An RNA of 170 nucleotides, treated with 2A3 and DMS and read out base by base.
The reactions ran in a buffer of 150 mM KOAc, 10 mM MgCl2 and 150 mM bicine (pH 8.5), at 24 C.
The DMS profile rests on 5,029 reads.
For DMS the reverse transcriptase was MarathonRT.

RNA sequence: GGGAACGACUCGAGUAGAGUCGAAAAACAGCUUGCCGCUCGCCCCCAGACCCGAGAUGAGCCUCGUGCCGAGGAGAGGCCGGAGACGGAGAGGCAGGAGGUCCCGAGGAGUAUCCAAGCAAAGAAGUCAGGGCUAACUUCGGUUAGCCCAAAAGAAACAACAACAACAAC
Reactivity to 2A3 in 0.01 (KOAc 150mM, MgCl2 10mM, bicine 150mM(pH8.5), 24C), signal-to-noise 2, nucleotides 027 to 129: a000c010a000g040c040u030u040g040c030c050g030c020u020c070g020c000c000c000c000c000a030g030a130c000c000c000g030a010g000a070u060g040a000g020c000c000u020c000g040u100g000c000c030g010a000g010g020a060g000a000g000g000c000c010g030g010a010g000a000c020g000g000a020g000a020g030g010c030a050g030g000a020g010g010u000c000c000c000g000a040g010g000a000g000u070a010u000c030c000a090a020g030c010a080a010a060g100a060a030g070u070c070a020
Reactivity to DMS in 0.01 (KOAc 150mM, MgCl2 10mM, bicine 150mM(pH8.5), 24C), signal-to-noise 3, nucleotides 027 to 129: a060c060a040g000c080u100u060g060c090c060g000c020u040c090g000c000c100c010c040c030a150g020a160c100c070c000g030a000g050a020u030g010a100g070c030c000u010c050g030u040g040c120c020g060a010g030g010a040g060a110g000g000c030c030g040g000a050g000a170c160g050g020a080g030a120g000g030c080a080g030g010a010g000g000u020c030c000c060g040a120g020g030a120g050u050a060u030c090c000a060a020g060c030a040a060a050g030a040a050g040u050c090a070